[RMDB]
RNA sequence: GGGAACGACUCGAGUAGAGUCGAAAAGUUGCCUGCUGCACCACCGACAUGCGAACAGCGUCAGCGCGCGACCACACCAGCAGGUUAAUCGGAGGCGUGUACGCUUCCGCCCGCACCGCAUAGCCGCGUACCUGUUUAACGCGCGUCCGAGACAGCAUACGCUAUGAUUUUUCGAAAUCAUAGCGUAAAAAGAAACAACAACAACAAC
Reactivity to 2A3 in 0.01 (KOAc 150mM, MgCl2 10mM, bicine 150mM(pH8.5), 24C), signal-to-noise 3, nucleotides 027 to 156: g070u060u050g050c000c000u030g000c020u010g000c040a080c030c020a050c050c090g080a060c050a090u170g010c040g040a070a040c030a040g040c030g070u040c050a010g020c010g000c000g000c010g080a140c080c040a080c000a020c040c050a010g010c000a020g070g000u100u170a020a040u080c020g020g020a020g000g000c020g000u100g120u180a100c050g010c000u010u010c020c000g000c010c010c010g070c020a090c020c040g070c080a090u080a170g060c030c000g030c020g020u030a040c000c010u060g100u080u060u160a100a020c020g010c020g010c020g020u030c020c050g080a070g020a060c020a020g030c000a020
Reactivity to DMS in 0.01 (KOAc 150mM, MgCl2 10mM, bicine 150mM(pH8.5), 24C), signal-to-noise 1, nucleotides 027 to 156: g010u000u000g010c030c020u010g030c000u010g000c010a110c030c020a060c080c040g010a140c060a170u000g020c010g030a060a080c090a140g080c100g040u000c060a100g010c040g020c000g000c000g020a070c060c070a070c120a110c060c080a120g020c030a030g000g020u000u000a080a100u000c040g030g000a040g020g000c000g030u020g040u010a060c060g000c010u000u000c010c010g000c020c000c030g000c050a120c070c030g000c050a030u000a120g010c020c010g000c020g000u000a080c040c040u000g000u000u000u030a020a160c020g010c060g020c000g000u000c020c040g020a210g000a070c050a140g040c020a300
This 207-nucleotide RNA was probed chemically with 2A3 and DMS.
The DMS profile rests on 2,179 reads.
The 2A3 profile rests on 1,644 reads.
The RNA was probed in 150 mM KOAc, 10 mM MgCl2 and 150 mM bicine (pH 8.5) at 24 C.
2A3 adducts were read by reverse transcription with SuperScript II with manganese.